[RMDB]
Source information
Structure probing data (DMS and 2A3) for a 177-nucleotide construct. For DMS the reverse transcriptase was MarathonRT. Conditions: 150 mM KOAc, 10 mM MgCl2 and 150 mM bicine (pH 8.5), 24 C.

RNA sequence: GGGAACGACUCGAGUAGAGUCGAAAAGCGCAGAAUAUACAACAGAGAGCCAAGCUGAUGUAUUUUUCCCUCUUGGUGAUGCACAAUCCGUAUUCCCGUGUCGUGAACUGUUGUGACAUGCGAGGGGCUACGAUUUAGUAUUCGUACUAAAUCGUAGAAAAGAAACAACAACAACAAC
Reactivity to DMS in 0.01 (KOAc 150mM, MgCl2 10mM, bicine 150mM(pH8.5), 24C), signal-to-noise 9, nucleotides 027 to 126: g020c050g020c040a070g010a110a080u010a090u000a030c030a030a050c030a030g010a110g010a300g010c050c050a040a080g010c130u000g000a070u000g010u000a040u000u000u010u010u000c030c020c010u010c050u010u010g010g010u000g000a120u000g010c050a040c070a060a060u010c060c040g000u010a150u000u000c020c020c010g020u010g010u000c050g010u000g010a110a150c060u000g010u000u000g010u000g000a090c090a070u000g000c030g010a100g010g000g000g010
Reactivity to 2A3 in 0.01 (KOAc 150mM, MgCl2 10mM, bicine 150mM(pH8.5), 24C), signal-to-noise 5, nucleotides 027 to 126: g050c040g000c020a000g130a150a050u180a010u040a130c020a030a010c010a020g050a000g000a000g080c020c010a020a020g000c100u050g040a090u100g110u120a160u080u120u020u070u070c010c020c000u020c010u020u030g040g000u040g030a050u120g020c020a000c020a060a070u050c040c020g040u040a130u040u040c030c020c010g030u050g030u050c080g010u030g080a100a070c030u050g000u040u030g020u020g020a030c030a040u040g010c010g020a040g020g010g000g000